[RMDB]
RNA sequence: GGGAACGACUCGAGUAGAGUCGAAAAGACCUGGGAGAGAACAACGAUAACAAUGAACCAUUCCCAUGAGUGUUGCCUGGCAAUAUUUGUGGGGAUUUUUUGAUUAUUGUUAGCAUUUUUCUAGACACUCCACGUUGGAGUUCGCUCCAACGUGGAGAAAAGAAACAACAACAACAAC
Reactivity to 2A3 in 0.01 (KOAc 150mM, MgCl2 10mM, bicine 150mM(pH8.5), 24C), signal-to-noise 1, nucleotides 027 to 126: g000a010c000c000u030g020g030g000a090g020a030g000a030a130c060a000a020c020g000a000u010a010a000c000a000a120u110g060a040a010c000c000a020u010u010c000c000c000a030u010g010a000g010u020g000u030u000g030c070c300u050g110g000c000a000a000u000a010u010u000u000g000u010g000g000g050g010a030u000u070u000u000u000u050g190a240u030u010a000u000u060g010u000u010a000g040c040a090u080u100u000u080u010c030u030a010g030a010c030a030